Record summary: Structure probing data (DMS and 2A3) for a 177-nucleotide construct. Values cover nucleotides 27 to 126. The 2A3 profile rests on 902 reads. Source: RMDB library 15KREP, as collected in RNAgym.
RNA sequence: GGGAACGACUCGAGUAGAGUCGAAAACUGGUUCUAACACCGAGUUUGCCUCUAAUUCCUCGGUGUUGUCACUUGUUAACUUCACCGUUGAUCCUCAAAAAGCUUAUCUCGAUUUCGUCAAUGCGGGCGCACAAGUAGUGUUCGCACUACUUGUGCGAAAAGAAACAACAACAACAAC
Reactivity to DMS in 0.01 (KOAc 150mM, MgCl2 10mM, bicine 150mM(pH8.5), 24C), signal-to-noise 1, nucleotides 027 to 126: c020u000g010g020u000u000c040u010a040a020c050a020c020c000g030a030g030u000u000u020g020c090c040u000c030u030a090a130u010u000c160c010u010c000g000g000u010g030u010u000g010u000c120a080c050u000u020g020u000u000a080a040c140u010u000c060a090c070c040g030u020u010g000a050u010c080c000u010c100a040a030a130a170a090g000c030u010u020a160u000c010u000c030g020a120u000u000u000c050g030u000c060a040a100u000g010c070g000g000g020
Reactivity to 2A3 in 0.01 (KOAc 150mM, MgCl2 10mM, bicine 150mM(pH8.5), 24C), signal-to-noise 1, nucleotides 027 to 126: c000u000g050g010u030u000c040u090a070a030c020a000c020c000g010a000g000u070u010u120g000c010c000u030c070u070a080a200u120u140c020c020u010c010g000g000u010g020u000u020g030u030c020a010c110u020u020g030u170u040a060a030c030u080u040c030a010c110c000g010u000u110g070a070u090c020c010u070c020a040a070a050a010a000g000c050u070u040a040u140c000u020c030g060a040u020u060u020c040g020u100c050a000a090u090g040c080g040g020g040
Conditions: 150 mM KOAc, 10 mM MgCl2 and 150 mM bicine (pH 8.5), 24 C.